[RMDB]
RNA sequence: GGGAACGACUCGAGUAGAGUCGAAAACACAUGACUUCGGUCAUGUGAAAAACCGUAGGUAUUGGAGGCGAGCCAUACGUUUGACGUUCGAAAGAGCCGAGUAUGGAACUACUCGUGAAGAUACCUAAACGGAAAAAGAUAGGGUUCGCCCUAUCAAUCCAGAUUAUAGGUUCGCCUAUAAUCUGGAAAAAGAAACAACAACAACAAC
Reactivity to 2A3 in 0.01 (KOAc 150mM, MgCl2 10mM, bicine 150mM(pH8.5), 24C), signal-to-noise 3, nucleotides 027 to 156: c000a000c000a000u000g000a000c010u030u070c300g080g000u010c000a000u000g000u000g030a070a000a010a010a000c000c000g010u000a010g000g000u000a000u010u020g030g020a050g230g160c000g000a000g000c010c000a000u000a010c020g030u060u170u230g110a100c040g010u010u010c020g050a200a120a100g000a020g010c000c010g000a010g000u000a020u010g000g020a020a010c020u130a040c000u250c000g010u040g030a010a000g000a010u000a000c010c000u000a030a020a000c010g030g040a090a080a000a040a000g000a000u030a020g020g010g030u080u040c210g160c040c000c000u000a000u000c000a000a010
Reactivity to DMS in 0.01 (KOAc 150mM, MgCl2 10mM, bicine 150mM(pH8.5), 24C), signal-to-noise 2, nucleotides 027 to 156: c010a000c010a020u000g000a050c000u000u010c300g040g020u000c010a010u000g000u000g000a020a030a070a070a120c020c000g030u000a070g000g010u000a040u000u000g010g010a300g050g000c030g000a090g020c020c030a050u000a050c020g040u010u010u000g040a140c140g000u000u000c020g000a120a110a280g010a030g030c000c010g010a120g010u000a000u010g020g000a080a070c030u010a300c000u000c000g040u000g010a300a300g000a100u000a040c020c010u000a010a020a100c010g010g000a060a060a130a120a120g000a060u000a010g010g020g040u010u030c210g010c020c000c020u010a000u020c020a090a300